[RMDB]
RNA sequence: GGGAACGACUCGAGUAGAGUCGAAAAGAGUGGAUGAGGUAAAGGUCGGGGGCGCGUCCGAGGGCGCUCAAUGUCUCGGGCCAUUGCCUCUCUAAUGUGGCGAGCGAGUGGUCCUUGACCUCGUGCAUCAUACGUGCCCAUUCGUGGGCACGUAUGAAAAAGAAACAACAACAACAAC
Reactivity to DMS in 0.01 (KOAc 150mM, MgCl2 10mM, bicine 150mM(pH8.5), 24C), signal-to-noise 2, nucleotides 027 to 126: g010a110g010u020g000g020a000u010g020a010g000g020u000a030a050a030g020g010u000c020g000g000g000g010g010c040g000c070g020u000c030c040g050a110g030g000g000c030g000c030u030c220a060a050u080g010u010c010u010c030g000g010g010c000c000a070u010u000g000c010c010u000c020u000c030u000a130a100u010g000u010g000g010c080g010a080g010c080g010a050g040u030g000g000u010c010c060u000u010g020a090c050c020u000c030g000u020g000c090a130
Reactivity to 2A3 in 0.01 (KOAc 150mM, MgCl2 10mM, bicine 150mM(pH8.5), 24C), signal-to-noise 4, nucleotides 027 to 126: g120a020g080u160g030g040a100u120g000a060g010g030u020a030a040a030g020g030u020c090g010g010g010g000g000c030g000c020g000u010c010c010g080a150g090g030g020c030g000c000u050c070a030a160u260g020u020c000u000c020g010g010g020c000c000a030u000u080g000c010c000u010c000u000c000u010a090a080u180g040u070g070g000c020g020a010g010c040g040a020g010u130g020g040u050c030c050u060u100g070a090c000c000u020c010g050u090g020c030a020